[RMDB]
RNA sequence: GGGAACGACUCGAGUAGAGUCGAAAAGGGCAAAGGCGCAAUACGUCGGUUUGACGCUCAGGACGUGCAGCGGCUAGCUGUAGCUCAGGACGGGCAGCCAUGAGCAUUGAGUCAAUGGCCGUAGUGCAAUAGGUAUAGGGUUCGCCCUAUACCUAUUAAAAGAAACAACAACAACAAC
Reactivity to DMS in 0.01 (KOAc 150mM, MgCl2 10mM, bicine 150mM(pH8.5), 24C), signal-to-noise 9, nucleotides 027 to 126: g010g010g010c050a040a100a130g010g010c050g010c040a070a070u010a090c050g000u000c030g010g010u000u010u000g000a090c090g010c050u000c080a080g000g010a050c100g010u000g010c050a080g010c020g010g010c120u010a100g010c030u000g020u000a090g000c020u000c050a080g010g010a120c090g010g000g010c050a100g000c010c010a060u000g000a050g000c020a130u000u010g010a120g020u000c040a050a100u000g000g010c030c020g020u010a060g010u000g010c090
Reactivity to 2A3 in 0.01 (KOAc 150mM, MgCl2 10mM, bicine 150mM(pH8.5), 24C), signal-to-noise 7, nucleotides 027 to 126: g060g010g010c050a060a030a050g060g010c030g010c030a030a050u090a090c040g020u030c030g050g040u030u070u150g040a030c030g000c020u030c020a010g070g030a040c070g090u090g010c020a010g020c010g080g090c060u070a040g000c000u010g070u080a030g010c010u010c040a010g080g070a040c090g030g020g030c020a010g020c030c010a130u040g010a010g010c040a040u050u190g040a040g040u040c020a040a070u050g030g020c020c010g050u070a060g060u020g050c020